Description: An RNA of 177 nucleotides, treated with DMS and 2A3 and read out base by base. Source: RMDB libraries RFM100 and RFMREP, as collected in RNAgym. DMS adducts were read by reverse transcription with MarathonRT. The RNA was probed in 150 mM KOAc, 10 mM MgCl2 and 150 mM bicine (pH 8.5) at 24 C.
[RMDB]
RNA sequence: GGGAACGACUCGAGUAGAGUCGAAAACCGUAUCUAAUACGAUGAGUGGUUCUAAAAACUAACGAAAGCAAACACCUCCUCGUGAGGGUGCUUUCGUUAGUCGUAUUUAGGAAUAGGUACGGGCUUCUGUAGAUCUUUGAUUCGUCAAAGAUCUACAAAAAGAAACAACAACAACAAC
Reactivity to DMS in 0.01 (KOAc 150mM, MgCl2 10mM, bicine 150mM(pH8.5), 24C), signal-to-noise 6, nucleotides 027 to 126: c010c000g010u000a010u000c010u000a030a120u030a040c020g000a150u020g010a270g010u000g020g010u000u010c010u010a030a020a050a160a040c000u000a000a000c000g000a000a000a000g000c000a050a080a140c130a200c000c000u000c010c020u020c260g010u030g010a000g000g010g010u010g000c000u010u000u000c000g000u000u000a000g000u000c110g000u010a100u010u010u000a010g000g010a070a300u010a000g000g010u000a010c000g010g020g010c100u010u010c160
Reactivity to 2A3 in 0.01 (KOAc 150mM, MgCl2 10mM, bicine 150mM(pH8.5), 24C), signal-to-noise 9, nucleotides 027 to 126: c000c000g000u000a000u000c000u010a030a090u130a150c070g090a100u240g080a060g090u100g050g080u080u020c020u030a020a020a020a040a030c000u000a000a000c000g010a000a010a000g000c020a050a170a090c060a260c070c000u020c010c020u230c140g180u300g060a000g000g000g000u000g000c000u000u000u000c000g000u000u000a000g000u000c000g010u030a090u000u020u030a020g020g030a070a060u020a060g000g000u000a000c000g010g030g000c020u110u030c040